RNA sequence: GGGAACGACUCGAGUAGAGUCGAAAAGAUAUGGAAUGUACAGGUCCGUUUAGGCUUUUGACGCUCGGCGGUUCGGAAACGAACCCGAGAGCGAUAAGCCUAAACGGACCUGUGACAUUCCUAAGUCCAAAUCUGAAUACUUCGGUAUUCAGAUUUGAAAAGAAACAACAACAACAAC
Reactivity to DMS in 0.01 (KOAc 150mM, MgCl2 10mM, bicine 150mM(pH8.5), 24C), signal-to-noise 2, nucleotides 027 to 126: g010a100u010a300u000g000g010a010a000u000g000u010a020c010a010g000g000u000c000c010g000u000u000u000a010g010g020c010u010u000u000u010g020a210c110g020c000u010c010g040g060c300g020g010u000u000c010g020g000a120a100a290c000g010a010a010c000c000c020g010a230g000a010g010c000g010a070u000a010a010g000c000c000u000a000a000a000c000g000g000a000c000c000u010g000u000g010a020c000a010u000u000c000c000u000a020a090g010u020c070

Source: RMDB library TTRINS, as collected in RNAgym. Structure probing data (DMS) for a 177-nucleotide construct. Reactivities are given for positions 27 through 126.